[RMDB]
RNA sequence: GGGAACGACUCGAGUAGAGUCGAAAAGAUAUGGACUAAUACGCGAAGAACACUGUGGUCCCUCGGAAACGAGAAACACAGUGGGAGCGUUCUAGUCCUAAGUCAAAGAGAACGUUCGCGUUCUCAACAGAUUUAAGGAGUUCGCUCCUUAAAUCUGAAAAGAAACAACAACAACAAC
Reactivity to DMS in 0.01 (KOAc 150mM, MgCl2 10mM, bicine 150mM(pH8.5), 24C), signal-to-noise 4, nucleotides 027 to 126: g000a030u000a300u010g010g010a020c000u010a020a060u000a010c000g020c010g010a080a130g030a130a150c010a000c000u000g010u010g000g000u010c180c140c010u020c000g010g000a070a080a170c010g030a020g000a100a070a160c000a010c000a000g010u000g000g000g010a050g010c000g000u000u000c110u000a010g010u020c000c000u000a010a090g000u000c040a090a090a130g010a010g000a010a000c010g000u010u010c200g020c010g010u000u000c000u000c000a070a200
Reactivity to 2A3 in 0.01 (KOAc 150mM, MgCl2 10mM, bicine 150mM(pH8.5), 24C), signal-to-noise 3, nucleotides 027 to 126: g030a000u100a040u130g000g000a000c010u000a020a050u110a070c020g050c010g180a300a060g000a100a010c000a000c020u010g010u010g000g030u240c090c080c000u000c010g020g030a070a060a040c010g000a000g000a000a060a000c000a000c000a000g000u000g030g000g000a020g000c000g010u010u030c020u000a010g000u000c020c000u000a080a030g040u020c060a160a140a050g010a000g000a000a010c020g020u070u110c300g020c020g150u000u000c020u000c010a000a010